[RMDB]
RNA sequence: GGGAACGACUCGAGUAGAGUCGAAAACUGACUACUACGGUAGUCAGACCGAACGUCUUCGGACGUUCGGAACGAGUACUACGGUACUCGAGGUCUGACGUGAGUCAGACCAGAGGCUCUUCGGAGCCUCAAGAUUCUCGUGAGAGAAUCACUUGUGCUACGGCACAAGACGAUCAACGUGAGUUGAUCGACCAUUCGUUCGCGAAUGGAGUUAGUCACUACGGUGACUAACAAAAUGUUUGAUCAGAUCAUUCAAAUCUGAUGGUACCUCCAGGUUCGCCUGGAGGAAAAGAAACAACAACAACAAC
Reactivity to 2A3 in 0.01 (KOAc 150mM, MgCl2 10mM, bicine 150mM(pH8.5), 24C), signal-to-noise 6, nucleotides 027 to 266: c000u000g000a000c000u000a000c010u010a030c220g120g010u000a000g000u000c000a000g020a000c000c000g010a000a000c000g000u000c010u060u050c160g120g000a000c000g000u000u010c000g000g000a010a020c020g000a000g000u000a010c000u010a020c160g110g000u000a000c000u000c000g030a100g000g000u000c000u000g000a010c010g060u060g040a030g010u000c000a000g000a000c000c000a000g000a000g000g020c030u050c080u130u160c290g110g000a000g000c000c000u000c000a000a000g000a000u000u000c000u000c000g040u090g030a110g000a000g010a030a000u000c020a020c050u000u010g000u000g000c010u020a070c240g130g000c000a000c000a000a000g070a060c020g000a000u000c000a000a000c010g040u050g080a080g010u020u000g000a000u000c000g010a030c000c000a000u010u000c000g020u020u080c250g010c010g140a000a000u000g000g000a010g000u000u000a000g000u010c000a000c010u030a030c240g120g000u000g000a000c000u000a000a000c000a010a080a010a010u060g030u060u050u080g050a010u000c000a000g010a020u000c030a060u150u300c050a100a060a030u010c000u000g010a010u010g020g020u050a070
Reactivity to DMS in 0.01 (KOAc 150mM, MgCl2 10mM, bicine 150mM(pH8.5), 24C), signal-to-noise 2, nucleotides 027 to 266: c010u000g000a000c010u000a000c000u020a170c170g000g000u010a010g000u000c000a000g000a120c000c000g010a020a000c020g000u000c000u010u030c220g000g000a010c000g000u000u000c010g020g000a030a100c040g010a030g000u010a000c000u000a140c200g060g020u000a000c000u000c000g000a080g010g040u000c000u010g010a010c050g010u010g000a120g020u000c010a020g000a020c000c020a060g000a000g000g000c000u000c040u000u040c170g020g000a020g010c000c000u010c000a050a080g000a030u000u010c000u000c000g020u020g010a170g000a030g030a020a010u000c000a190c010u000u000g000u000g000c020u000a130c230g030g020c000a010c010a000a020g010a250c070g000a000u010c000a000a000c020g020u020g000a170g000u000u000g000a000u010c010g010a210c000c030a020u000u000c000g020u010u030c180g040c010g000a000a000u000g000g020a140g000u000u010a000g010u000c000a010c010u010a070c160g030g010u000g010a020c000u010a000a010c000a060a060a200a010u000g010u000u000u000g000a020u000c000a010g000a010u000c010a040u020u030c050a020a040a000u000c010u000g000a010u000g000g000u030a110
Background
Conditions: 150 mM KOAc, 10 mM MgCl2 and 150 mM bicine (pH 8.5), 24 C. Structure probing data (2A3 and DMS) for a 307-nucleotide construct. Values are in units of 0.01, from 0 to 300, in steps of 10. For 2A3, 11,716 sequencing reads were counted. For DMS the reverse transcriptase was MarathonRT.